Structure probing data (DMS and 2A3) for a 207-nucleotide construct. The DMS profile rests on 10,130 reads. For 2A3, 7,351 sequencing reads were counted. Conditions: 150 mM KOAc, 10 mM MgCl2 and 150 mM bicine (pH 8.5), 24 C. It was measured as part of the RMDB library RFM130.
[RMDB]
RNA sequence: GGGAACGACUCGAGUAGAGUCGAAAAACAGGAUGAUGAGUCACUCGCUGAGUGACAAUAAGCCGAGUGUUAGCGGUUUUUAUGUAAUCGUGAUGAUCAUUCCCUCAAAAGCGAUAAUUGUGAACUGACUGUAAAUGUGGAACGUUCGCGUUCCACAGAUACUUACAAGGUUCGCCUUGUAAGUAUCAAAAGAAACAACAACAACAAC
Reactivity to DMS in 0.01 (KOAc 150mM, MgCl2 10mM, bicine 150mM(pH8.5), 24C), signal-to-noise 4, nucleotides 027 to 156: a080c060a140g020g040a090u010g020a080u010g010a290g030u000c010a030c010u000c010g000c210u010g010a090g050u000g000a030c020a050a070u000a160a130g030c020c010g020a190g020u000g000u010u000a170g020c020g020g000u000u000u000u000u010a080u030g030u000a070a020u000c020g050u000g000a160u000g000a090u000c060a140u000u000c010c010c010u000c030a050a070a130a200g010c010g030a130u000a070a160u000u010g000u000g010a090a130c070u020g030a100c030u000g000u010a020a050a150u000g030u000g000g010a040a010c010g040u000u010c300g020c050g020u000u000c020c000a000c010a010
Reactivity to 2A3 in 0.01 (KOAc 150mM, MgCl2 10mM, bicine 150mM(pH8.5), 24C), signal-to-noise 9, nucleotides 027 to 156: a000c040a020g090g000a050u090g010a020u060g020a060g030u010c010a000c010u010c020g300c230u200g020a000g010u040g010a010c010a010a030u080a020a000g020c010c020g020a060g040u110g020u110u120a030g030c010g000g050u060u020u020u030u100a170u120g120u120a040a030u020c020g010u040g050a070u030g010a000u050c020a060u040u060c010c010c000u050c040a060a090a030a010g060c020g020a030u070a100a100u200u110g040u030g070a080a070c020u030g100a030c020u060g010u200a080a090a130u100g000u000g000g000a000a000c000g000u040u050c090g000c010g080u000u000c010c000a000c000a000